Chemical mapping of a 177-nucleotide RNA with 2A3 and DMS. Conditions: 150 mM KOAc, 10 mM MgCl2 and 150 mM bicine (pH 8.5), 24 C.
RNA sequence: GGGAACGACUCGAGUAGAGUCGAAAAUCGGCAGCGUGUGGACAGCUUGGCCAAGGUCGGCGCCCGAUAGCGUAGCGGAGUCACCGGAGAUGGCGAUGAUGUCGCGCGAGAUCUCAAACGCAGCACCACGUGCCUAUUGUUUCGACAAUAGGCACGUAAAAGAAACAACAACAACAAC
Reactivity to 2A3 in 0.01 (KOAc 150mM, MgCl2 10mM, bicine 150mM(pH8.5), 24C), signal-to-noise 3, nucleotides 027 to 126: u070c010g040g020c020a050g000c040g040u060g060u090g140g040a020c010a030g060c010u040u090g070g000c020c010a040a010g060g010u060c040g020g000c000g000c020c010c000g040a090u090a050g100c070g060u040a010g000c030g040g010a030g020u040c000a000c020c020g020g000a180g030a060u120g050g000c030g000a020u070g000a030u090g040u080c010g000c010g000c010g090a020g000a060u000c030u030c030a110a100a040c060g010c010a010g010c010a030c030c030
Reactivity to DMS in 0.01 (KOAc 150mM, MgCl2 10mM, bicine 150mM(pH8.5), 24C), signal-to-noise 4, nucleotides 027 to 126: u010c040g000g010c060a070g010c050g030u000g030u010g010g000a080c050a060g000c060u000u000g020g020c010c030a090a130g020g000u000c050g010g010c050g020c060c020c020g000a090u000a070g010c110g040u000a060g010c040g020g000a170g000u010c020a070c010c030g000g010a070g020a160u010g000g010c000g000a040u000g000a080u010g020u000c050g020c050g020c050g000a100g010a060u000c030u000c050a070a060a100c050g020c030a070g010c070a100c140c090